[RMDB]
RNA sequence: GGGAACGACUCGAGUAGAGUCGAAAAACAGGCUGCCAUCGGCCAUGCUGUCUCCGCUUGCGCGAAGGUAGUAAGUCGCGCUUGGAUGCCGUAUGCAGUGAUCAUGGAGAUCCAGAUCGGACUCGACCGGAUUGGAGGUAUUCGUACCUCCAAUCCGAAAAGAAACAACAACAACAAC
Reactivity to DMS in 0.01 (KOAc 150mM, MgCl2 10mM, bicine 150mM(pH8.5), 24C), signal-to-noise 1, nucleotides 027 to 126: a230c090a020g000g000c020u000g020c020c090a170u000c000g000g000c020c060a110u010g000c060u020g010u000c000u030c000c050g000c070u050u010g010c050g030c000g020a000a000g020g000u060a060g000u070a180a130g000u000c040g010c060g000c010u000u000g000g000a040u020g000c000c020g000u000a070u030g000c020a000g000u000g010a030u030c060a200u050g000g010a070g000a130u020c000c000a150g000a070u030c140g000g000a070c000u000c000g020a150c120
Reactivity to 2A3 in 0.01 (KOAc 150mM, MgCl2 10mM, bicine 150mM(pH8.5), 24C), signal-to-noise 3, nucleotides 027 to 126: a000c030a010g100g020c000u000g000c020c000a060u040c000g000g030c050c040a120u270g000c000u090g040u030c000u000c070c030g030c020u050u160g010c040g030c000g020a010a000g080g060u070a030g110u120a280a060g050u010c020g010c030g000c010u000u030g040g000a040u060g050c010c000g030u060a020u240g030c030a010g010u000g110a080u090c090a090u080g010g050a030g000a030u000c000c000a030g080a270u080c120g040g010a030c040u050c080g050a060c040
Chemical mapping of a 177-nucleotide RNA with DMS and 2A3. For DMS the reverse transcriptase was MarathonRT. Source: RMDB library OK1LIB, as collected in RNAgym. For 2A3, 1,598 sequencing reads were counted.